[RMDB]
RNA sequence: GGGAACGACUCGAGUAGAGUCGAAAAUGCAUCGCACCAGCCCGUACUCCACUGCCUUGUCGGCGUAGAAGGUGGGGCCUACCGCCUGGGUGAUUGGGACGCGGAGACUUCCGGCAGUGAGCGGUGCGGCCUGACUCCAUUUCGAUGGAGUCAGGCCAAAAGAAACAACAACAACAAC
Reactivity to 2A3 in 0.01 (KOAc 150mM, MgCl2 10mM, bicine 150mM(pH8.5), 24C), signal-to-noise 2, nucleotides 027 to 126: u040g000c000a000u040c060g040c010a040c010c020a040g000c000c070c000g010u020a050c050u030c040c030a000c000u030g020c000c030u120u070g110u120c050g120g150c040g000u040a060g070a180a030g110g000u130g020g020g040g140c030c100u100a150c000c000g080c010c000u120g000g090g040u190g130a210u100u180g040g090g010a020c030g040c060g010g130a090g030a030c050u150u040c030c050g000g000c000a040g030u020g090a030g000c050g010g000u020g000c000
Conditions: 150 mM KOAc, 10 mM MgCl2 and 150 mM bicine (pH 8.5), 24 C. An RNA of 177 nucleotides, treated with 2A3 and read out base by base. It was measured as part of the RMDB library OK1LIB. As a SHAPE reagent, 2A3 marks flexible, mostly unpaired nucleotides at the ribose 2'-OH.